[RMDB]
RNA sequence: GGGAACGACUCGAGUAGAGUCGAAAAGAAAGAAAGAUAUUAUGCCAUGACAUUGUGUCAAUAUGCGAUGAUGUGUUGUGAUGGCACAGCGUCAUCACGUGGUGACGCAACAUCAUGACGUAAGAAAUUACAGAUCAAUAUUCGUAUUGAUCUGUAAAAAAGAAACAACAACAACAAC
Reactivity to 2A3 in 0.01 (KOAc 150mM, MgCl2 10mM, bicine 150mM(pH8.5), 24C), signal-to-noise 9, nucleotides 027 to 126: g110a020a070a010g130a040a120a010g110a040u110a050u150u030a020u040g010c010c010a010u020g000a010c020a040u030u060g020u010g000u020c000a010a030u080a040u130g030c040g030a040u030g010a010u030g090u020g120u250u020g020u030g070a210u300g190g010c050a000c010a030g010c000g020u020c000a000u000c000a000c080g060u130g000g020u010g000a000c000g000c010a000a000c010a010u010c000a000u010g000a000c010g000u010a010a020g050a050a080a010
Reactivity to DMS in 0.01 (KOAc 150mM, MgCl2 10mM, bicine 150mM(pH8.5), 24C), signal-to-noise 9, nucleotides 027 to 126: g010a110a100a090g010a100a090a100g010a140u020a080u000u000a010u000g000c020c010a010u000g010a020c070a260u000u000g010u000g000u000c010a020a060u010a010u000g010c040g010a020u000g000a020u010g010u010g010u030u000g010u000g010a280u030g010g010c040a010c020a060g010c010g010u000c000a000u000c000a050c080g020u010g000g010u010g000a010c000g010c010a020a020c100a150u000c000a000u000g000a030c010g010u000a010a010g000a090a080a100

The record gives the reactivity of an RNA of 177 nucleotides to 2A3 and DMS.
As a SHAPE reagent, 2A3 marks flexible, mostly unpaired nucleotides at the ribose 2'-OH.
The RNA was probed in 150 mM KOAc, 10 mM MgCl2 and 150 mM bicine (pH 8.5) at 24 C.
For 2A3 the reverse transcriptase was SuperScript II with manganese.